The data come from the RNA Mapping Database (RMDB), library OK2TRN.
Chemical mapping of a 177-nucleotide RNA with DMS and 2A3.
The 2A3 profile rests on 1,252 reads.
The reactions ran in a buffer of 150 mM KOAc, 10 mM MgCl2 and 150 mM bicine (pH 8.5), at 24 C.
2A3 is a SHAPE reagent: it acylates the 2'-hydroxyl of flexible nucleotides of all four kinds.
[RMDB]
RNA sequence: GGGAACGACUCGAGUAGAGUCGAAAAUCUCAGUCACAGCCAGGAUCGAGAUCCACCUCGCCAAGCACAAAACUGAGGGAUCAGUACGGUGGUAUUGGUAAUUACUAUCGUGGGGCCACUGGCGCCAACUGUUGCUACGGUUCGCCGUAGCAACAGUAAAAGAAACAACAACAACAAC
Reactivity to DMS in 0.01 (KOAc 150mM, MgCl2 10mM, bicine 150mM(pH8.5), 24C), signal-to-noise 2, nucleotides 027 to 126: u000c000u020c000a110g010u000c100a120c090a150g010c100c070a110g010g020a110u020c100g000a040g000a050u000c050c050a150c040c000u000c020g030c070c020a030a050g000c020a070c070a030a040a110a070c020u000g000a020g010g020g000a130u000c000a020g010u000a050c050g000g030u000g030g000u000a030u000u010g020g020u000a090a070u010u000a000c000u010a010u000c000g010u000g000g000g030g000c050c070a090c090u000g010g000c020g020c190c130a060
Reactivity to 2A3 in 0.01 (KOAc 150mM, MgCl2 10mM, bicine 150mM(pH8.5), 24C), signal-to-noise 2, nucleotides 027 to 126: u040c000u000c010a040g070u030c050a020c040a140g000c030c020a060g060g030a140u100c060g040a020g000a050u000c020c020a040c030c030u070c000g040c000c010a060a080g040c040a010c090a070a110a070a060c070u050g000a060g000g110g030a140u050c020a010g050u060a020c010g010g020u020g000g030u030a010u020u060g140g070u100a070a220u110u050a030c030u010a010u040c000g040u010g060g070g110g000c000c010a070c070u050g000g000c020g040c030c020a080